[RMDB]
RNA sequence: GGGAACGACUCGAGUAGAGUCGAAAACAGUCUUGCAGUGGAAGUGCCCACUUGUUCACAUGAAACAAGUUUCAUAGCAAGUAAGUAGGGGUCAGGCCAGCACUGAAACCCAAGUCUGGCUGAACCACGCAUCUGAAUGAUUCGUCAUUCAGAUGCGAAAAGAAACAACAACAACAAC
Reactivity to 2A3 in 0.01 (KOAc 150mM, MgCl2 10mM, bicine 150mM(pH8.5), 24C), signal-to-noise 4, nucleotides 027 to 126: c030a030g090u030c010u030u050g040c040a060g010u040g060g050a100a070g080u100g170c030c020c000a000c000u010u000g000u030u030c130a180c100a300u140g080a080a020a010c010a000a090g020u000u020u040c020a000u030a030g010c030a030a000g000u040a150a040g050u070a080g020g050g040g050u030c050a010g060g110c010c000a010g010c060a000c020u040g020a160a100a100c030c020c030a010a020g000u000c000u010g020g010c010u020g010a010a010c000c000a030
Reactivity to DMS in 0.01 (KOAc 150mM, MgCl2 10mM, bicine 150mM(pH8.5), 24C), signal-to-noise 4, nucleotides 027 to 126: c130a070g020u000c010u000u000g020c030a300g050u000g000g000a050a070g030u010g000c030c010c060a300c010u000u010g000u010u010c050a130c210a160u010g010a090a030a010c020a020a050g000u000u000u000c020a000u010a170g010c010a000a060g000u020a050a120g010u000a090g000g000g000g000u010c070a130g010g040c010c000a010g020c170a020c050u000g010a080a120a210c070c050c050a080a070g000u000c000u000g000g010c000u000g000a090a080c020c030a180
Conditions: 150 mM KOAc, 10 mM MgCl2 and 150 mM bicine (pH 8.5), 24 C.
An RNA of 177 nucleotides, treated with 2A3 and DMS and read out base by base.
The 2A3 profile rests on 4,546 reads.
Source: RMDB library OK2TRN, as collected in RNAgym.
Reactivities are given for positions 27 through 126.